RNA sequence: GGGAACGACUCGAGUAGAGUCGAAAAUCUCGCCGACGGCCUCGGCCACGGAUACGUCGCCCUCUCCCUCGACGACGGCGGCAAGCUCGCAAACGCUGAGGAACGUGCGCGGCGAGCUGAGAAGUCGAAUGCGCCUCUGCGCGGGACGAUCACGCGACGAGCUUUCUAUUUUCGAAUAGAAAGCUCGAAAAGAAACAACAACAACAAC
Reactivity to 2A3 in 0.01 (KOAc 150mM, MgCl2 10mM, bicine 150mM(pH8.5), 24C), signal-to-noise 1, nucleotides 027 to 156: u010c010u000c010g050c030c000g060a100c030g010g020c000c000u000c000g000g010c000c000a020c070g000g020a040u050a160c110g000u020c000g000c000c000c000u000c000u080c000c010c010u120c080g150a160c020g010a050c130g050g000c010g020g000c000a040a000g010c020u010c040g130c040a150a070a050c110g000c000u000g000a010g050g020a120a150c080g080u060g040c080g000c000g030g000c000g000a010g000c020u070g000a050g030a200a060g050u100c070g040a230a110u100g030c040g000c030c020u130c150u150g010c060g010c020g000g030g000a020c010g020a070u110c100a080c100g090c030g090a040
An RNA of 207 nucleotides, treated with 2A3 and read out base by base. 2A3 adducts were read by reverse transcription with SuperScript II with manganese. Values cover nucleotides 27 to 156. The data come from the RNA Mapping Database (RMDB), library OK3TST.